[RMDB]
RNA sequence: GGGAACGACUCGAGUAGAGUCGAAAACCACACGUUCGCGUGUGGAAUCAGGGGUCUACUUUGCGAGGCUUUUGACGAGCUGAAGCCUCCACGGCUCGAUAAGCUACCCACCGCGGAAGUAGACGGAGGCACCCGUUACUGCCAGUUCGCUGGCAAACUUCCUCCGGUAAUUCGUUACCGGAGGAAGAAAAGAAACAACAACAACAAC
Reactivity to 2A3 in 0.01 (KOAc 150mM, MgCl2 10mM, bicine 150mM(pH8.5), 24C), signal-to-noise 2, nucleotides 027 to 156: c000c000a010c000a010c020g020u050u070c230g050c000g160u000g020u050g010g080a020a160u160c110a100g200g000g110g030u000c010u010a010c010u040u020u020g040c000g130a150g190g000c060u030u040u140u180g190a120c120g020a000g000c000u000g020a050a030g000c000c000u000c000c010a030c000g000g000c000u000c000g030a080u030a210a000g000c010u110a110c110c050c050a050c080c020g020c010g000g040a000a020g000u000a000g000a000c000g000g010a000g000g000c000a010c000c010c000g040u040u130a130c110u090g010c000c000a030g010u080u100c190g070c080u020g010g000c000a010a010a080